RNA sequence: GGGAACGACUCGAGUAGAGUCGAAAAACAACAGAUAGCUGGAACCAGCGUAGAAUUCUACGCAUAUCCAUAGCGAAUGGUACCUGUAAAGAAAAUAAUGAUGCAUGUACAAGUACCAACAGGUAUCAAUGCCAUGGUGAUGUCAAUCACAUAUGCAAAUGCAUGGACUGUUCGCAGUCCAUGCAUUAAAAGAAACAACAACAACAAC
Reactivity to 2A3 in 0.01 (KOAc 150mM, MgCl2 10mM, bicine 150mM(pH8.5), 24C), signal-to-noise 2, nucleotides 027 to 156: a000c140a020a000c000a160g170a070u170a050g000c010u000g030g010a170a130c100c020a040g000c010g000u000a000g020a040a300u300u140c000u000a000c000g000c000a000u000a010u010c000c000a000u130a030g000c050g040a010a130u000g020g010u020a020c000c000u060g030u110a040a240a000g070a020a160a010a000u240a020a120u130g130a020u060g080c050a000u070g030u080a010c000a010a180g030u040a100c000c000a010a000c000a000g050g000u040a000u070c000a000a040u060g000c040c020a030u060g010g070u020g010a010u040g050u100c010a100a060u040c030a000c040a070u090a040u130g000c000a070

Structure probing data (2A3) for a 207-nucleotide construct. The reactions ran in a buffer of 150 mM KOAc, 10 mM MgCl2 and 150 mM bicine (pH 8.5), at 24 C. It was measured as part of the RMDB library OK3TST. 2A3 adducts were read by reverse transcription with SuperScript II with manganese. Reactivities are given for positions 27 through 156.